[RMDB]
RNA sequence: GGGAACGACUCGAGUAGAGUCGAAAAAGAUCGAUUACGAUCGAUCAAUGAUGCCCCUCACCCACCUCUGAAGAUCCCAGGUGGGCGAGGGAACGGAGCACGGGAUCACGAGCAGUACACUGCUCGAAAAAGAACUAGACCUUCGGGUCUAGUUCAACUUGUUGCUUUACUUCGGUAAAGCAACAAGAAAAGAAACAACAACAACAAC
Reactivity to 2A3 in 0.01 (KOAc 150mM, MgCl2 10mM, bicine 150mM(pH8.5), 24C), signal-to-noise 2, nucleotides 027 to 156: a000g010a000u010c020g000a000u080u000a070c110g040a020u000c000g010a000u010c020a000a100u280g060a070u160g080c000c000c000c000u010c000a020c000c000c000a020c020c000u090c050u090g070a190a020g010a010u000c030c000c000a000g030g010u020g000g000g000c000g000a020g000g000g020a050a000c050g120g110a110g030c090a110c210g000g020g000a000u020c010a010c030g000a000g000c000a000g000u130a100c240a060c260u000g010c000u020c000g000a000a000a000a010a010g000a000a000c000u000a000g000a000c000c000u020u120c300g050g000g000u000c000u000a000g000u000u000c000a000a000

An RNA of 207 nucleotides, treated with 2A3 and read out base by base. For 2A3, 889 sequencing reads were counted. Values cover nucleotides 27 to 156. The RNA was probed in 150 mM KOAc, 10 mM MgCl2 and 150 mM bicine (pH 8.5) at 24 C. Reactivities are rounded to 0.1 and cut off at 0 and 3.